[RMDB]
RNA sequence: GGGAACGACUCGAGUAGAGUCGAAAAGUCCGGGACGAAAGUCAGGACAAGUCGAACAGCACGACGACGAGUGCGAAGACAGUCCAUGAAAAAGACUUCGUGUCGGAGUCAUGGACAAAAACAGACAGCAUUCACUAUGGUUCGCCAUAGUGAAUGCAAAAGAAACAACAACAACAAC
Reactivity to 2A3 in 0.01 (KOAc 150mM, MgCl2 10mM, bicine 150mM(pH8.5), 24C), signal-to-noise 4, nucleotides 027 to 126: g020u010c010c000g090g270g000a020c030g020a150a020a000g010u020c020a030g000g000a010c050a040a030g000u010c030g010a130a070c040a050g000c000a010c030g160a000c050g080a020c100g070a140g060u010g000c020g040a020a010g020a000c010a000g000u000c000c000a010u040g000a010a030a040a000a010g010a010c010u070u100c260g190u190g080u140c000g010g040a030g060u000c000a010u010g020g000a000c070a040a090a030a020a000c050a010g140a000c010a020
Reactivity to DMS in 0.01 (KOAc 150mM, MgCl2 10mM, bicine 150mM(pH8.5), 24C), signal-to-noise 3, nucleotides 027 to 126: g000u000c000c000g010g070g020a020c000g000a070a090a070g020u000c000a300g000g000a020c060a080a050g000u010c020g000a130a070c270a280g030c000a060c030g090a180c210g010a110c190g030a110g000u000g000c000g000a160a220g030a100c150a080g000u000c000c000a010u040g010a010a010a050a070a210g010a000c000u020u030c110g070u110g030u000c000g010g000a240g010u000c010a010u000g000g060a000c030a040a020a070a050a040c070a040g020a120c300a050